[RMDB]
RNA sequence: GGGAACGACUCGAGUAGAGUCGAAAAGAAUUUCAGCGUACUUUCUAACGACCGUUAGAGGGAUAGCAAUGACUGUAGGCUAUCUUAGACGUUCAGGUAGCGUCUUACGCUGAACUACAGUCAUAAGGAUCAUCUUGUUAUUCGUAAUAGGAUGAUCAAAAGAAACAACAACAACAAC
Reactivity to 2A3 in 0.01 (KOAc 150mM, MgCl2 10mM, bicine 150mM(pH8.5), 24C), signal-to-noise 9, nucleotides 027 to 126: g090a050a090u020u020u010c000a000g000c000g020u020a060c060u070u150u020c010u010a030a050c050g260a290c210c190g010u000u000a000g000a010g010g010g000a000u010a000g000c040a010a030u040g000a000c000u000g000u010a000g060g000c000u000a000u000c000u010u030a020g000a000c000g020u030u020c110a130g160g220u210a010g020c000g000u000c000u000u000a000c010g000c000u000g000a000a000c000u010a010c000a000g000u000c000a020u070a090a050g160
Reactivity to DMS in 0.01 (KOAc 150mM, MgCl2 10mM, bicine 150mM(pH8.5), 24C), signal-to-noise 9, nucleotides 027 to 126: g010a110a090u010u000u000c010a010g000c000g010u000a040c160u020u020u000c000u000a000a010c020g010a170c300c270g010u000u010a010g010a030g010g000g000a010u000a010g000c040a120a050u000g000a010c010u010g010u000a090g000g000c010u000a000u000c010u000u000a020g010a010c000g010u000u000c070a150g020g020u040a020g000c000g010u010c010u000u000a010c000g000c000u000g000a010a030c050u000a040c000a000g000u000c000a090u050a110a110g010

Source information:
Structure probing data (2A3 and DMS) for a 177-nucleotide construct. For DMS, 78,540 sequencing reads were counted. For 2A3, 135,607 sequencing reads were counted. Source: RMDB library OK1LIB, as collected in RNAgym.